[RMDB]
RNA sequence: GGGAACGACUCGAGUAGAGUCGAAAAGCAAGGAGAAGGAGGAGGAGAGCAUGAGCACCACAGCGCCCUGGUCGAGUUGGAAGGCGACAACGCGCGGCUGGCGGUGCUCAAACGCACGGUCGAGCUGACCCAUUUCGCCUACCCGGCUCUGAACCUGCCGCCUCUAUUUAUUCGUAAAUAGAGGCGGAAAAGAAACAACAACAACAAC
Reactivity to 2A3 in 0.01 (KOAc 150mM, MgCl2 10mM, bicine 150mM(pH8.5), 24C), signal-to-noise 1, nucleotides 027 to 156: g110c030a070a020g040g080a010g040a020a040g060g030a010g030g010a050g030g040a070g010a000g010c000a020u070g000a000g000c000a000c010c030a010c000a010g010c040g020c040c030c010u170g000g040u000c020g000a040g050u130u060g170g010a090a030g180g000c020g020a000c010a050a080c040g030c010g000c030g250g040c010u010g010g030c040g000g000u000g000c000u000c020a000a000a000c040g060c000a020c020g010g030u050c040g090a020g010c030u060g250a170c030c000c000a030u060u100u060c040g000c010c000u080a140c010c000c040g000g010c010u000c010u040g050a060a090c020c000u010g040
Overview:
Chemical mapping of a 207-nucleotide RNA with 2A3. Values are in units of 0.01, from 0 to 300, in steps of 10. The 2A3 profile rests on 629 reads. The reactions ran in a buffer of 150 mM KOAc, 10 mM MgCl2 and 150 mM bicine (pH 8.5), at 24 C.